[RMDB]
RNA sequence: GGGAACGACUCGAGUAGAGUCGAAAACCCAGCGACUCAUCAGUGGGCUUAGCCCAGACUUAUGGGAGAUUAGUUACCUCUCAGCCCCUCCACCUUGGGGUGCCCUAUUCGGAGCACUGCAGUUCCCGAUACCGAGAAAGUUCGCUUUCUCGGUAUCAAAAGAAACAACAACAACAAC
Reactivity to 2A3 in 0.01 (KOAc 150mM, MgCl2 10mM, bicine 150mM(pH8.5), 24C), signal-to-noise 2, nucleotides 027 to 126: c000c000c000a030g040c050g130a100c030u030c070a090u010c030a060g050u060g030g010g000c060u100u160a030g010c000c000c000a020g060a050c030u160u130a040u110g000g060g000a030g040a040u090u040a040g050u040u090a080c010c020u040c020u030c030a040g020c000c000c000c000u010c040c020a090c010c020u040u050g000g010g070g010u020g010c010c000c000u110a180u110u140c080g010g020a050g030c030a010c020u090g080c010a020g000u000u000c000c000c000
Reactivity to DMS in 0.01 (KOAc 150mM, MgCl2 10mM, bicine 150mM(pH8.5), 24C), signal-to-noise 2, nucleotides 027 to 126: c010c000c020a140g020c090g000a080c040u000c100a070u020c090a100g010u000g000g020g010c030u000u000a080g000c000c010c010a070g000a070c160u000u010a050u000g020g010g000a020g000a080u000u000a090g010u000u010a090c170c010u000c010u010c020a050g000c040c010c000c020u000c020c030a100c180c110u020u000g010g000g020g000u000g000c010c000c010u000a110u010u010c150g020g000a060g030c020a010c000u010g000c040a080g000u000u000c000c010c010
Conditions: 150 mM KOAc, 10 mM MgCl2 and 150 mM bicine (pH 8.5), 24 C. An RNA of 177 nucleotides, treated with 2A3 and DMS and read out base by base. It was measured as part of the RMDB library VIROID. The DMS profile rests on 2,135 reads. For DMS the reverse transcriptase was MarathonRT. For 2A3 the reverse transcriptase was SuperScript II with manganese. For 2A3, 1,844 sequencing reads were counted.